RNA sequence: GGGAACGACUCGAGUAGAGUCGAAAAGCUCGAUGCCAACGACGCGCUAAGCCGCCACGAAUGGUUGAUCGCACCGUUAUUAUUGCAGGGCAGCGCCUCGCCGGAUGCGCGGAUUUUACUGGCGCUGAGUUACAAUUUAAUUCGUUAAAUUGUAACUAAAAGAAACAACAACAACAAC
Reactivity to DMS in 0.01 (KOAc 150mM, MgCl2 10mM, bicine 150mM(pH8.5), 24C), signal-to-noise 9, nucleotides 027 to 126: g010c030u000c030g010a100u010g010c050c110a050a110c070g010a080c080g010c030g010c050u000a100a110g010c030c030g010c070c070a100c140g000a090a090u000g010g010u000u000g010a080u000c070g010c040a090c030c020g010u000u000a080u010u010a090u010u010g010c070a090g010g000g010c020a040g010c020g010c010c010u000c090g010c020c020g000g000a120u010g020c110g020c010g000g000a160u010u010u010u010a100c140u000g010g010c000g020c040u000g000
Reactivity to 2A3 in 0.01 (KOAc 150mM, MgCl2 10mM, bicine 150mM(pH8.5), 24C), signal-to-noise 9, nucleotides 027 to 126: g030c010u010c040g080a090u120g030c030c020a030a020c030g070a030c040g020c000g000c030u030a060a020g030c020c010g000c030c030a080c060g100a090a080u120g040g010u040u110g030a070u060c030g000c030a040c040c010g070u040u050a120u180u040a090u090u230g050c050a060g050g000g000c010a010g000c000g000c010c010u020c010g010c010c010g130g060a120u170g060c100g000c000g050g010a030u100u100u080u190a100c050u030g020g000c000g000c020u020g000

Source information:
Structure probing data (DMS and 2A3) for a 177-nucleotide construct. The DMS profile rests on 69,669 reads. Values cover nucleotides 27 to 126. Conditions: 150 mM KOAc, 10 mM MgCl2 and 150 mM bicine (pH 8.5), 24 C.